Notes:
Chemical mapping of a 177-nucleotide RNA with 2A3 and DMS. The data come from the RNA Mapping Database (RMDB), library OK2TRN. The reactions ran in a buffer of 150 mM KOAc, 10 mM MgCl2 and 150 mM bicine (pH 8.5), at 24 C. 2A3 adducts were read by reverse transcription with SuperScript II with manganese. DMS adducts were read by reverse transcription with MarathonRT. For 2A3, 1,389 sequencing reads were counted.
RNA sequence: GGGAACGACUCGAGUAGAGUCGAAAAAUGCUCACUGCCAGUCAAGCUGCAGGAAAGGUACGCGAGUCUAUGUGUGCUGGAAAAGUAUUAGACUUUCCCACCAUUAUGAAAACACUAGCCUUUUUCCAUAUUGCUUGCUGUUCGCAGCAAGCAAUAUAAAAGAAACAACAACAACAAC
Reactivity to 2A3 in 0.01 (KOAc 150mM, MgCl2 10mM, bicine 150mM(pH8.5), 24C), signal-to-noise 1, nucleotides 027 to 126: a000u090g000c010u010c050a050c070u020g040c060c010a020g050u080c030a040a020g020c030u040g000c030a030g080g070a040a050a010g060g010u050a030c090g000c040g060a030g080u010c050u040a090u050g120u020g010u010g050c130u030g000g040a000a080a040a020g030u020a110u080u170a060g100a010c000u020u000u010c060c000c000a000c000c010a050u180u170a080u210g100a040a050a050a000c030a050c060u030a050g000c020c030u000u070u000u080u030c000c010
Reactivity to DMS in 0.01 (KOAc 150mM, MgCl2 10mM, bicine 150mM(pH8.5), 24C), signal-to-noise 2, nucleotides 027 to 126: a120u000g000c010u000c040a160c050u000g000c060c030a070g010u000c130a030a070g010c100u000g000c080a070g000g010a030a050a040g020g030u000a020c290g010c070g010a120g010u000c030u000a060u000g000u000g000u000g000c130u000g010g000a030a020a010a020g010u010a140u000u000a170g010a050c020u000u000u000c010c000c010a050c050c030a060u010u000a140u010g010a020a040a090a080c040a030c080u010a180g020c020c010u000u000u000u000u000c030c050